[RMDB]
RNA sequence: GGGAACGACUCGAGUAGAGUCGAAAAAGCGGCGUGUUGCCGACGAUCGGCAGGCCUGCCGUGAUCGCGUGAUGCGGUUCGAGGUUGUCCAGAACGGUGCGCAAGUCCAGCAGUGACGCGACUUCGCGCCCGUGGGAUGUUUCGACAUCCCACGGGCAAAAGAAACAACAACAACAAC
Reactivity to DMS in 0.01 (KOAc 150mM, MgCl2 10mM, bicine 150mM(pH8.5), 24C), signal-to-noise 3, nucleotides 027 to 126: a090g020c000g010g000c010g010u000g020u000u000g010c020c020g010a120c300g000a080u010c010g010g000c030a030g020g020c160c040u000g020c030c000g000u000g000a030u000c020g010c030g020u010g000a130u020g010c010g040g000u000u000c060g020a060g000g010u000u010g000u010c010c010a150g020a100a120c060g000g020u010g030c030g020c070a050a090g000u000c020c090a180g010c050a130g010u010g010a130c180g010c060g010a040c040u000u000c120g020c050
Reactivity to 2A3 in 0.01 (KOAc 150mM, MgCl2 10mM, bicine 150mM(pH8.5), 24C), signal-to-noise 2, nucleotides 027 to 126: a000g070c020g000g020c000g030u100g060u060u010g000c000c020g000a030c050g110a230u160c030g020g000c000a000g060g090c010c020u030g040c010c020g000u010g040a030u050c030g000c020g080u170g150a100u240g060c020g000g080u020u060c050g000a050g090g060u120u100g050u090c010c010a040g030a150a000c070g020g000u130g070c020g030c080a060a010g030u050c020c040a070g070c010a040g060u060g120a050c050g050c040g010a020c010u020u030c040g010c000
This 177-nucleotide RNA was probed chemically with DMS and 2A3.
The data come from the RNA Mapping Database (RMDB), library OK2TST.
DMS adducts were read by reverse transcription with MarathonRT.
Reactivities are given for positions 27 through 126.